[RMDB]
RNA sequence: GGGAACGACUCGAGUAGAGUCGAAAAGAUAUGGAGCUAGCUCGCGUAGCGAAACUAAUCGGAAACGAUUAGUAGUAGCUACACGAGCUUGGACCUCCUAAGUCAAACACGGUCUUCGGACCGUGAACCAAACCAGUUGCUUCGGCAACUGGUUUGGAAAAGAAACAACAACAACAAC
Reactivity to DMS in 0.01 (KOAc 150mM, MgCl2 10mM, bicine 150mM(pH8.5), 24C), signal-to-noise 1, nucleotides 027 to 126: g000a070u000a300u020g010g000a000g040c000u000a020g000c020u000c000g010c110g010u000a000g000c000g000a220a080a100c000u010a040a000u000c000g000g000a150a110a090c000g000a020u010u010a000g000u000a040g020u000a100g000c000u000a000c000a000c040g000a000g020c020u000u000g010g000a080c300c000u000c000c000u000a040a150g000u000c020a070a140a230c040a030c000g000g050u000c000u000u010c300g000g000a000c000c000g000u000g000a020a150
This 177-nucleotide RNA was probed chemically with DMS. For DMS the reverse transcriptase was MarathonRT. Conditions: 150 mM KOAc, 10 mM MgCl2 and 150 mM bicine (pH 8.5), 24 C. Source: RMDB library TTRDEL, as collected in RNAgym.